[RMDB]
Chemical mapping of a 177-nucleotide RNA with DMS and 2A3. Values cover nucleotides 27 to 126. DMS adducts were read by reverse transcription with MarathonRT.

RNA sequence: GGGAACGACUCGAGUAGAGUCGAAAAUCAAAAAAGAAUCUGAGGGAGACUAUGGAGUGCUAUGACACCAGGAAAACUUAAAACUUUGUGUAAGAUAGACUGGCCAGCAUUAGAGGUAGGUUGGCCAAAUCUGCGUAGAAUUCGUUCUACGCAGAUUAAAAGAAACAACAACAACAAC
Reactivity to DMS in 0.01 (KOAc 150mM, MgCl2 10mM, bicine 150mM(pH8.5), 24C), signal-to-noise 2, nucleotides 027 to 126: u020c070a010a030a100a070a060a120g000a070a080u000c040u000g010a050g000g000g000a120g030a080c090u010a090u000g000g010a080g020u010g020c040u000a050u000g010a010c100a050c050c060a040g010g000a040a080a100a050c090u020u000a050a020a070a110c050u000u000u000g010u000g010u000a050a060g010a080u020a070g010a150c190u000g010g000c020c000a010g000c010a070u010u020a090g010a070g000g020u000a060g010g000u000u010g010g000c020c010a000
Reactivity to 2A3 in 0.01 (KOAc 150mM, MgCl2 10mM, bicine 150mM(pH8.5), 24C), signal-to-noise 1, nucleotides 027 to 126: u040c020a000a010a000a020a010a030g080a000a050u070c010u140g020a070g040g060g000a060g010a050c010u050a060u090g040g030a050g010u030g020c020u090a090u200g060a010c000a010c020c030a010g000g080a020a050a000a090c040u050u050a020a090a020a070c010u110u090u130g050u050g020u070a030a080g000a150u090a040g050a060c080u040g000g010c000c000a020g000c010a010u120u140a040g030a010g070g080u090a030g020g030u000u010g000g000c010c000a010